RNA sequence: GGGAACGACUCGAGUAGAGUCGAAAACCGUAGGCCACUCUCCCCACCACCCUAAGACCAACAGCAGCUCUUCGAAAGAGGAGCUGACAUGGUCAAAGGGUGAGGAGUGGCCUAAACGGAAAACGGAAGCAUCAGUGUUCGCACUGAUGCUUCCGAACAAACAUAGAAACUUCGGUUUCUAUGUUUGAAAAGAAACAACAACAACAAC
Reactivity to DMS in 0.01 (KOAc 150mM, MgCl2 10mM, bicine 150mM(pH8.5), 24C), signal-to-noise 1, nucleotides 027 to 156: c000c030g020u000a010g030g010c010c000a020c010u000c010u010c260c060c010c080a300c080c010a020c020c150c000u000a090a300g030a040c000c000a020a090c160a190g000c000a030g000c000u000c010u000u010c000g030a210a230a210g020a020g030g000a010g000c000u010g000a000c030a300u010g040g030u010c020a030a300a010g020g010g050u000g010a300g000g000a060g040u000g000g000c020c000u000a000a000a040c000g000g000a120a030a060a140c000g020g020a020a020g020c000a000u020c040a020g020u020g030u000u000c300g050c000a010c000u030g000a000u000g000c000u000u000c000c020g010a000a020
Chemical mapping of a 207-nucleotide RNA with DMS. The reactions ran in a buffer of 150 mM KOAc, 10 mM MgCl2 and 150 mM bicine (pH 8.5), at 24 C. The DMS profile rests on 1,922 reads. It was measured as part of the RMDB library RNAMAK.